The data come from the RNA Mapping Database (RMDB), library TTRDES. The record gives the reactivity of an RNA of 177 nucleotides to DMS and 2A3. DMS adducts were read by reverse transcription with MarathonRT. For DMS, 2,456 sequencing reads were counted. The 2A3 profile rests on 2,439 reads. The reactions ran in a buffer of 150 mM KOAc, 10 mM MgCl2 and 150 mM bicine (pH 8.5), at 24 C. Reactivities are given for positions 27 through 126.
[RMDB]
RNA sequence: GGGAACGACUCGAGUAGAGUCGAAAAAAAAAGAUAUGGAUCUAAACGAAUCUAUUGAUGCGUUGAAAUCGUUUCGGAAACGAAACGAUGGAGCAUACAUAGACUAUUUAGAUCCUAAGUCAAAAAACUACGGUAAUAUGUUCGCAUAUUACCGUAGAAAAGAAACAACAACAACAAC
Reactivity to DMS in 0.01 (KOAc 150mM, MgCl2 10mM, bicine 150mM(pH8.5), 24C), signal-to-noise 2, nucleotides 027 to 126: a030a070a100a120a100g000a040u000a190u020g010g000a020u000c000u000a000a000a010c100g010a040a060u000c000u000a000u000u000g020a020u010g000c010g020u010u010g000a050a100a010u010c000g000u010u010u000c010g020g010a060a030a050c000g000a010a000a000c000g000a010u000g000g000a070g010c000a010u000a080c100a020u000a000g010a040c090u010a180u000u000u000a000g000a010u000c000c000u000a010a090g010u040c000a000a080a060a120a140a170
Reactivity to 2A3 in 0.01 (KOAc 150mM, MgCl2 10mM, bicine 150mM(pH8.5), 24C), signal-to-noise 1, nucleotides 027 to 126: a000a000a000a000a000g040a030u050a060u080g010g010a020u020c000u050a000a040a000c050g080a260a300u000c000u000a020u000u240g000a000u000g000c020g280u300u030g000a010a020a000u000c000g000u000u000u000c000g000g030a050a010a000c000g000a020a010a010c010g000a010u000g020g010a010g040c000a000u040a030c000a000u010a030g020a040c020u020a000u070u000u000a000g010a010u000c000c000u000a010a020g030u010c040a040a090a040a040a090a270